[RMDB]
Annotation:
The data come from the RNA Mapping Database (RMDB), library RFM100. The record gives the reactivity of an RNA of 177 nucleotides to 2A3. The reactions ran in a buffer of 150 mM KOAc, 10 mM MgCl2 and 150 mM bicine (pH 8.5), at 24 C. For 2A3, 690 sequencing reads were counted. Reactivities are given for positions 27 through 126.
RNA sequence: GGGAACGACUCGAGUAGAGUCGAAAAUAGAAGACUCUGUUGCUUAAUGAGAAUGAAUCCUAAUUCGACACUAGGUGGUAACCCCUCGCUAUUAUUCGGAAUAGGACACUCUCUAUCAGAAUGAAUUCCUCACUUUUGAGUUCGCUCAAAAGUGAGGAAAAGAAACAACAACAACAAC
Reactivity to 2A3 in 0.01 (KOAc 150mM, MgCl2 10mM, bicine 150mM(pH8.5), 24C), signal-to-noise 2, nucleotides 027 to 126: u280a000g110a050a020g100a090c070u020c000u060g040u010u020g000c020u010u180a020a030u160g000a000g000a020a030u020g010a010a040u000c000c000u000a000a060u030u000c000g000a000c000a010c090u010a030g000g010u030g000g000u130a140a100c000c010c000c010u020c010g240c000u000a000u250u040a090u150u000c000g000g000a050a010u000a020g000g000a000c000a000c000u000c010u000c000u000a070u070c050a000g130a140a100u110g000a040a080u130u000